[RMDB]
RNA sequence: GGGAACGACUCGAGUAGAGUCGAAAAAAAAGUGAACAGAGAAUGAGAAUUGGCCAGUAAUUCUUUGGUAUCAAAAACUGUCUAUUAGCAAACAGUUGACAACAUGAUUGGACUAAUAGCCGCUCACAGCGGAAUAUUACUUCGGUAAUAUUCCGCUAAAAGAAACAACAACAACAAC
Reactivity to DMS in 0.01 (KOAc 150mM, MgCl2 10mM, bicine 150mM(pH8.5), 24C), signal-to-noise 1, nucleotides 027 to 126: a020a030a150a090g010u000g000a080a070c020a020g000a050g000a110a040u010g010a120g020a070a030u010u000g000g000c030c010a070g010u010a120a010u000u000c020u000u000u000g010g010u020a070u010c040a050a060a020a050a020c050u010g010u000c030u000a040u000u010a020g030c120a100a050a120c010a020g010u010u000g010a050c140a060a070c120a040u010g000a060u000u010g020g020a110c030u010a000a040u000a050g000c020c080g010c100u000c100a040c200